[RMDB]
RNA sequence: GGGAACGACUCGAGUAGAGUCGAAAAUAAAUCUAUUGUGUGAUGCGUGUUGUUGCGCAAUUGUUCCAGUAAAGCAAAGCUGUGUUCUUUGAAAAUGUGAAGGUCUGCACUCAAAUUAAAAAAUUUUUUUCCAUCAUGUCAUAGGUGGCCACCAACACGUACGGAAUUAAUUCGUUAAUUCCGUACGAAAAGAAACAACAACAACAAC
Reactivity to DMS in 0.01 (KOAc 150mM, MgCl2 10mM, bicine 150mM(pH8.5), 24C), signal-to-noise 2, nucleotides 027 to 156: u010a070a100a080u000c050u010a130u000u010g030u000g030u020g010a060u010g020c060g020u000g000u000u010g020u010u000g000c020g000c070a070a090u010u000g020u010u000c020c000a190g020u000a070a090a080g020c020a060a060a110g020c060u010g040u000g020u010u000c020u000u000u020g000a070a080a080a130u000g000u000g010a110a100g000g020u000c030u020g040c010a030c030u000c030a040a030a130u020u030a030a020a050a060a060a080u000u000u000u000u000u000u000c050c020a060u000c040a060u000g020u000c070a070u000a070g020g040u020g040g070c050c040a090c030c020a050a070c070a120
Reactivity to 2A3 in 0.01 (KOAc 150mM, MgCl2 10mM, bicine 150mM(pH8.5), 24C), signal-to-noise 1, nucleotides 027 to 156: u070a000a120a050u060c050u060a100u180u090g010u050g010u020g010a020u060g000c040g010u030g030u040u000g000u000u000g000c030g020c040a040a070u020u070g060u050u010c080c010a060g020u100a070a070a010g030c100a070a000a000g000c090u020g010u010g020u190u020c010u060u080u090g080a180a130a010a040u110g040u030g010a050a040g040g000u000c000u010g000c030a030c010u060c040a040a080a210u150u270a070a060a000a010a020a090u210u070u020u040u000u020u080c010c000a000u060c010a010u140g060u160c000a010u070a070g000g010u040g010g000c030c010a050c030c010a020a000c040a000

Notes:
Chemical mapping of a 207-nucleotide RNA with DMS and 2A3. The RNA was probed in 150 mM KOAc, 10 mM MgCl2 and 150 mM bicine (pH 8.5) at 24 C. Reactivities are given for positions 27 through 156. For DMS the reverse transcriptase was MarathonRT. The DMS profile rests on 4,656 reads.